[RMDB]
RNA sequence: GGGAACGACUCGAGUAGAGUCGAAAAGCUGUCCUUGCUCCUAAAUCACAACUUGGUGGACAUAGAGACCUACUUGUGCAAGAAACACACACCAAACUCAUCCAUGCAACAACAGAGAUGUUUAGUAGGACACUACUUUCAACCACAAAAGAUGAUGAACGUAGGCAUCUUUCGAGAUGCCUACGUUAAAAGAAACAACAACAACAAC
Reactivity to 2A3 in 0.01 (KOAc 150mM, MgCl2 10mM, bicine 150mM(pH8.5), 24C), signal-to-noise 2, nucleotides 027 to 156: g050c040u070g090u130c020c080u000u090g050c060u020c020c020u090a110a160a130u080c020a020c020a110a090c070u040u060g060g010u000g020g000a000c020a050u090a030g020a010g050a070c010c010u040a000c040u060u070g050u040g030c140a230a080g080a100a260a000c060a000c000a000c000a010c010c090a040a120a090c010u020c000a020u030c000c000a050u100g040c070a060a060c000a030a000c000a090g020a020g010a090u020g040u000u070u050a000g020u000a000g000g070a060c060a040c080u170a050c000u000u030u090c030a100a000c000c000a030c040a030a140a020a050g090a000u130g020a060u160g030
An RNA of 207 nucleotides, treated with 2A3 and read out base by base.
The 2A3 profile rests on 947 reads.
The RNA was probed in 150 mM KOAc, 10 mM MgCl2 and 150 mM bicine (pH 8.5) at 24 C.